[RMDB]
RNA sequence: GGGAACGACUCGAGUAGAGUCGAAAAUAAUUGGACUCAACGCCGGACAUCUCACCAGCAUCGACAGCAGGAGUGACGAUCAGGUUGAUGACCUUAUCAGACCUGCUGAGAGGAGGUGCAUGGCCGCGUCCACCCAAACUUUCGAGUUUGGGUGGACAAAAGAAACAACAACAACAAC
Reactivity to 2A3 in 0.01 (KOAc 150mM, MgCl2 10mM, bicine 150mM(pH8.5), 24C), signal-to-noise 3, nucleotides 027 to 126: u280a020a100u140u100g050g010a000c020u000c050a090a030c080g080c060c020g000g010a010c030a040u060c060u010c050a020c000c020a000g090c010a130u020c010g150a210c020a020g000c000a000g010g000a130g130u090g040a050c040g000a000u030c040a000g010g080u030u050g110a070u220g100a010c000c010u000u000a000u000c000a000g030a060c000c000u000g010c000u000g000a000g000a000g020g060a030g010g010u000g000c010a080u010g000g000c000c010g050c000
Reactivity to DMS in 0.01 (KOAc 150mM, MgCl2 10mM, bicine 150mM(pH8.5), 24C), signal-to-noise 2, nucleotides 027 to 126: u020a090a140u000u000g000g010a050c070u000c030a050a050c100g010c010c010g030g000a140c030a000u010c110u000c000a110c060c010a070g010c220a110u000c060g010a120c060a000g050c000a010g000g000a200g000u020g010a140c070g000a020u020c300a000g000g000u020u010g000a150u000g000a100c020c010u020u000a050u000c000a150g050a130c000c020u000g030c000u000g000a230g000a040g000g000a040g020g050u000g000c300a050u000g000g000c000c020g000c180